Structure probing data (DMS and 2A3) for a 207-nucleotide construct. The 2A3 profile rests on 3,619 reads.
[RMDB]
RNA sequence: GGGAACGACUCGAGUAGAGUCGAAAACCUCGCAUUGCAAGUUCGUGCUUGCGACUUACACGUAGGGCGAGGGGUGGGCGAAAGUUGCCAUGAGACCGUAACUUUCGUAGUCAUUGAUAAAGGGGCACAUGCCCUGACUAGUUCGCUAGUCAGGGAAGUCUACGUUUCUGUUCGCAGAAACGUAGACAAAAGAAACAACAACAACAAC
Reactivity to DMS in 0.01 (KOAc 150mM, MgCl2 10mM, bicine 150mM(pH8.5), 24C), signal-to-noise 1, nucleotides 027 to 156: c020c000u000c010g000c090a140u000u000g050c030a050a020g010u010u000c130g030u000g050c040u010u010g010c000g020a080c060u000u000a080c040a070c080g010u000a110g040g000g000c060g030a070g010g010g010g010u010g010g000g030c010g030a020a010a040g000u000u010g020c010c030a220u000g030a160g030a150c100c150g010u000a010a060c020u010u000u030c000g000u000a070g020u010c030a140u020u000g000a200u000a030a100a120g000g000g020g020c050a090c120a140u010g030c000c000c000u010g010a000c000u000a000g010u010u000c300g000c040u000a010g000u000c000a000g010g000g000a020a040
Reactivity to 2A3 in 0.01 (KOAc 150mM, MgCl2 10mM, bicine 150mM(pH8.5), 24C), signal-to-noise 2, nucleotides 027 to 156: c000c000u010c010g000c020a100u050u170g010c030a020a030g050u110u220c080g110u300g060c000u030u060g010c010g020a020c030u050u150a030c120a030c120g150u110a050g010g070g000c050g020a030g000g000g010g070u120g000g010g020c000g010a000a010a010g000u000u000g010c030c030a080u170g090a050g030a130c050c050g010u010a000a000c000u010u010u000c010g000u000a030g030u030c040a080u020u180g070a030u120a110a110a030g020g000g020g020c080a060c030a080u140g030c000c000c000u000g000a000c000u000a000g010u020u010c100g020c170u000a000g000u000c000a000g000g000g010a000a000
Overview: Values cover nucleotides 27 to 156.